[RMDB]
RNA sequence: GGGAACGACUCGAGUAGAGUCGAAAACACGAAAGUUGGCUAAUCCUGGUCGGACAUCAGGAGGUUAGUGCAGUGGCAUAAGCCAUCUUGGCGCUAAUAGAUACUAAUCGUAGCAUAGCUGAAUAAACCGUAGUGAUAUGUUCGCAUAUCACUACGGAAAAGAAACAACAACAACAAC
Reactivity to DMS in 0.01 (KOAc 150mM, MgCl2 10mM, bicine 150mM(pH8.5), 24C), signal-to-noise 5, nucleotides 027 to 126: c030a080c190g000a080a060a090g010u000u000g030g020c060u010a050a070u010c010c010u000g010g000u010c180g010g010a300c120a020u010c020a000g000g010a050g000g000u000u000a000g040u000g010c030a050g000u040g010g030c000a250u030a160a130g000c000c000a010u030c140u010u050g020g010c010g010c000u000a020a040u010a060g010a090u010a030c090u020a110a060u010c100g000u000a040g000c020a120u020a020g010c010u000g010a080a090u030a060a100a190
Reactivity to 2A3 in 0.01 (KOAc 150mM, MgCl2 10mM, bicine 150mM(pH8.5), 24C), signal-to-noise 8, nucleotides 027 to 126: c100a010c040g100a110a070a040g070u080u070g040g000c030u030a050a060u020c000c000u010g000g040u070c170g090g070a050c040a060u030c000a000g020g010a020g020g060u010u010a010g000u000g000c010a010g000u010g030g000c030a110u140a300a110g010c010c000a020u070c060u080u110g170g000c000g000c010u010a020a020u050a060g080a020u080a080c050u120a130a100u060c040g030u030a000g010c030a090u030a070g010c010u040g060a110a040u150a130a050a010